[RMDB]
RNA sequence: GGGAACGACUCGAGUAGAGUCGAAAAGUACAAAGAGUGGACACUCUCCGUGAUUCUAAUUCCAAGCGAGGGGUUGGCAGCCAGCUGGCACCAGGUAGUCCCUGGAAGUGACAGGUUGGGCUGUGCUCCUGUCUGCCAGUGUGUCUACCAAGGUGGACAUCAUAGGUAUAUUCGUAUACCUAUGAUGAAAAGAAACAACAACAACAAC
Reactivity to 2A3 in 0.01 (KOAc 150mM, MgCl2 10mM, bicine 150mM(pH8.5), 24C), signal-to-noise 8, nucleotides 027 to 156: g060u060a050c050a030a120a010g070a030g020u070g020g030a020c020a010c080u040c010u000c040c040g060u080g030a060u120u040c040u140a090a090u130u020c040c030a060a020g030c040g050a070g000g020g010g000u050u060g040g020c010a010g020c020c020a020g020c040u060g030g010c010a000c000c010a000g010g000u010a010g040u050c020c000c000u010g030g020a230a180g090u020g040a000c000a010g020g050u110u070g120g040g000c100u120g060u100g050c010u010c000c000u010g010u010c000u010g000c010c000a020g010u040g020u030g010u070c000u010a010c000c010a050a050g030g020u030g010g040a020
Reactivity to DMS in 0.01 (KOAc 150mM, MgCl2 10mM, bicine 150mM(pH8.5), 24C), signal-to-noise 5, nucleotides 027 to 156: g040u000a110c050a060a060a080g010a120g020u000g010g020a120c070a100c040u010c010u000c030c030g030u000g010a100u010u010c050u010a080a130u000u000c040c030a110a150g030c080g000a090g000g020g020g000u000u000g030g030c030a080g010c020c030a080g010c010u010g000g010c010a100c010c010a100g010g020u000a110g010u000c110c010c000u000g000g010a060a110g010u000g020a040c010a020g010g010u000u000g010g020g020c030u000g010u000g000c030u000c020c020u000g020u000c000u010g000c000c000a060g020u000g010u000g010u000c010u010a050c020c000a050a130g020g030u000g000g020a200